[RMDB]
RNA sequence: GGGAACGACUCGAGUAGAGUCGAAAAGAUAUGGAUGUCGCAUCAUGUCCGUAUUAAGGGAGCCAUUAAUCGGAAACGAUUACUGGCGACGAUCUUACUGUACGGACAUGAUGCGACAUCCUAAGUCCUCCUGGAUUAGGUUCGCCUAAUCCAGGAGAAAAGAAACAACAACAACAAC
Reactivity to DMS in 0.01 (KOAc 150mM, MgCl2 10mM, bicine 150mM(pH8.5), 24C), signal-to-noise 2, nucleotides 027 to 126: g020a110u010a300u000g010g000a010u000g010u000c010g000c000a000u000c000a000u000g000u000c000c000g060u000a000u000u000a010a000g000g000g010a000g010c000c000a010u000u010a010a000u000c000g040g010a200a130a270c000g010a000u000u000a000c080u000g000g040c000g000a020c230g010a040u000c000u000u000a030c300u010g010u000a000c000g020g010a000c000a000u000g000a000u000g000c000g000a000c000a000u010c000c000u010a010a040g000u010c020